[RMDB]
RNA sequence: GGGAACGACUCGAGUAGAGUCGAAAAACGGUCGUACGCGACCGAGGCGCGGCUAGGUCGACGGACCGAACAAUGGCAUCCCGCAUUCUGCCAUCCGCCGCGCAGCUUCUUCUUAAACGGUGCGGAAAAAAGUAGGACACCUUCGGGUGUCCUACAACGUGUUUAUGCUGUUCGCAGCAUAAACACGAAAAGAAACAACAACAACAAC
Reactivity to 2A3 in 0.01 (KOAc 150mM, MgCl2 10mM, bicine 150mM(pH8.5), 24C), signal-to-noise 1, nucleotides 027 to 156: a000c010g010g000u010c010g020u060a040c240g000c010g120a000c000c000g010a050g000g000c000g000c010g000g020c000u020a000g010g000u020c020g110a200c220g170g000a010c000c010g000a000a000c000a010a010u000g010g000c000a010u120c050c030c000g000c010a030u300u130c030u030g010c000c010a010u030c010c020g000c000c010g020c010g000c000a010g020c000u090u080c000u130u040c030u100u170a060a040a030c070g020g000u000g000c000g000g000a020a100a000a000a000a000g000u010a000g000g000a000c000a000c000c020u030u120c200g000g000g040u000g000u010c000c000u000a000c000a000a000
Source: RMDB library M2RFPK, as collected in RNAgym. Chemical mapping of a 207-nucleotide RNA with 2A3. The reactions ran in a buffer of 150 mM KOAc, 10 mM MgCl2 and 150 mM bicine (pH 8.5), at 24 C.